RNA sequence: GGGAACGACUCGAGUAGAGUCGAAAAGAUAUGGAUCGCGAUACCUACCCACCGUAUUGUUUGCGACGAAGACGCUCGGAAACGAGCGUCAGAGCAAACCAAUACGAGGGUAUCGCGAUCCUAAGUCGAAUCUAUCCUGGUUCGCCAGGAUAGAUUCAAAAGAAACAACAACAACAAC
Reactivity to 2A3 in 0.01 (KOAc 150mM, MgCl2 10mM, bicine 150mM(pH8.5), 24C), signal-to-noise 1, nucleotides 027 to 126: g120a030u300a150u300g020g000a000u020c010g000c000g000a010u000a010c000c020u080a140c030c070c060a060c000c030g030u000a010u040u000g130u000u000u030g210c300g170a300c080g000a300a080g030a010c020g000c020u010c000g010g020a110a100a110c040g010a010g000c010g000u000c010a010g010a000g010c000a010a000a000c070c080a000a010u000a020c010g000a030g020g020g000u000a000u010c010g010c000g000a000u030c010c010u010a030a020g090u050c080
Reactivity to DMS in 0.01 (KOAc 150mM, MgCl2 10mM, bicine 150mM(pH8.5), 24C), signal-to-noise 2, nucleotides 027 to 126: g000a070u000a300u010g010g000a040u030c000g030c010g000a010u010a000c010c030u000a100c050c060c110a300c120c000g000u000a010u000u010g000u000u010u000g010c000g030a200c250g000a090a170g000a030c010g050c000u000c000g070g010a090a030a280c010g000a010g030c010g050u000c020a000g000a190g010c000a000a000a030c130c190a020a010u000a000c000g000a040g090g020g010u000a000u000c000g000c000g000a020u000c000c010u010a010a100g000u040c080